[RMDB]
RNA sequence: GGGAACGACUCGAGUAGAGUCGAAAACCGACGGUGAAAUACCACCCCUUUUGGCGUUACUUUGCUAACUUGGAAUAACAGUACCUUCUAGUUUAGGCUAGAAUGGUUUUGGUGAUUAAAAUGGGUUACAUUAUGUUUGUUUCGACAAACAUAAUGUAAAAGAAACAACAACAACAAC
Reactivity to DMS in 0.01 (KOAc 150mM, MgCl2 10mM, bicine 150mM(pH8.5), 24C), signal-to-noise 5, nucleotides 027 to 126: c000c000g010a110c210g020g000u000g000a060a140a100u010a080c040c010a300c060c000c010c030u000u000u000u000g010g020c080g000u000u010a050c130u010u000u010g010c070u000a030a020c080u000u000g010g010a120a080u010a060a050c060a030g010u000a040c010c000u000u000c000u000a010g010u000u000u040a110g020g000c000u010a000g000a010a010u030g030g000u000u000u020u010g000g010u010g010a060u020u000a010a040a050a050u020g000g010g010u000u000
Reactivity to 2A3 in 0.01 (KOAc 150mM, MgCl2 10mM, bicine 150mM(pH8.5), 24C), signal-to-noise 9, nucleotides 027 to 126: c010c010g020a050c080g000g010u040g030a090a050a020u140a060c010c010a030c010c000c000c000u010u030u040u080g070g000c040g050u070u070a080c080u210u190u210g030c040u030a050a070c050u040u090g070g050a090a070u090a120a030c010a020g030u030a010c000c000u000u000c010u000a010g010u020u080u100a180g090g000c000u000a000g000a030a040u130g000g000u010u030u050u040g030g010u070g020a090u090u150a050a060a040a090u100g050g000g000u020u000